Annotation
This 177-nucleotide RNA was probed chemically with 2A3 and DMS. The RNA was probed in 150 mM KOAc, 10 mM MgCl2 and 150 mM bicine (pH 8.5) at 24 C.
RNA sequence: GGGAACGACUCGAGUAGAGUCGAAAAGAUAUGGAUCUAGGGUGAGAAAACGCAACAGCUCGGAAACGAGACAUGCGUCCCUCAGAUCCUAAGUCAAAACUCGCUUUAUGUUCGCAUAAAGCGAGAAGAGCGAUUAUAUCUUCGGAUAUAAUCGCUCAAAAGAAACAACAACAACAAC
Reactivity to 2A3 in 0.01 (KOAc 150mM, MgCl2 10mM, bicine 150mM(pH8.5), 24C), signal-to-noise 2, nucleotides 027 to 126: g010a010u060a030u100g000g000a010u000c010u020a020g010g010g060u120g170a280g210a130a160a040a030c000g030c010a000a120c040a220g060c000u020c020g040g040a050a040a020c000g020a000g010a010c040a030u070g010c000g050u060c010c020c010u040c010a020g000a010u000c000c000u020a080a020g030u010c010a040a010a010a280c000u000c000g020c000u010u020u000a000u010g070u040u110c300g000c170a010u000a000a030a000g000c030g000a010g000a000a020
Reactivity to DMS in 0.01 (KOAc 150mM, MgCl2 10mM, bicine 150mM(pH8.5), 24C), signal-to-noise 2, nucleotides 027 to 126: g020a010u010a300u010g000g000a020u000c010u000a010g000g000g010u010g000a140g010a090a050a060a070c010g000c000a040a060c270a170g000c010u010c030g000g000a050a070a210c000g000a000g000a080c110a130u000g000c000g000u000c010c030c000u000c140a000g030a040u000c010c000u000a000a060g000u000c040a060a110a150a160c000u000c000g000c000u000u000u000a000u020g000u010u030c240g000c010a010u000a010a010a020g010c000g010a000g000a010a010